[RMDB]
RNA sequence: GGGAACGACUCGAGUAGAGUCGAAAAUCUUUAUGUAGAAAGACUCUAUCUACUGCCGAAAACUCGUAGAUAUAUACAGGAACAACUGGGUGCGUUCGACCAUCCGACGAUCGCGUGUAAUAUUUUCUUGGUUUCCUCGCCUGAAUCACGGAUUGAAUCAUAUGCCUAUUUUCGAAUAGGCAUAUGAAAAAGAAACAACAACAACAAC
Reactivity to DMS in 0.01 (KOAc 150mM, MgCl2 10mM, bicine 150mM(pH8.5), 24C), signal-to-noise 1, nucleotides 027 to 156: u000c020u000u000u000a080u000g030u000a080g010a170a150a270g010a020c040u000c050u000a010u010c020u010a060c020u000g000c010c040g020a100a050a110a100c050u010c100g040u000a050g040a060u000a090u000a160u020a120c070a110g000g020a080a100c100a050a110c040u000g000g010g040u000g000c020g000u010u000c050g010a100c130c000a050u010c030c000g000a110c030g020a090u000c020g040c030g030u010g030u000a040a140u010a090u000u000u000u010c040u020u010g010g030u010u000u000c030c010u010c030g000c060c060u000g010a070a070u010c020a090c060g010g010a060u000u000g010a120a180
Reactivity to 2A3 in 0.01 (KOAc 150mM, MgCl2 10mM, bicine 150mM(pH8.5), 24C), signal-to-noise 2, nucleotides 027 to 156: u060c040u100u180u070a120u210g030u030a040g070a100a060a000g050a040c010u000c020u070a070u010c000u010a000c040u030g050c020c040g100a140a120a090a090c030u070c050g070u040a010g020a050u000a000u010a000u030a080c030a050g140g020a120a020c010a030a020c100u080g030g040g000u040g070c070g050u040u160c030g030a080c030c010a000u040c010c020g020a050c040g000a060u020c000g020c040g070u030g030u050a080a070u050a160u130u180u090u020c060u030u010g050g000u030u020u080c010c060u040c040g020c050c010u010g000a040a010u060c020a030c000g000g000a000u010u090g060a080a010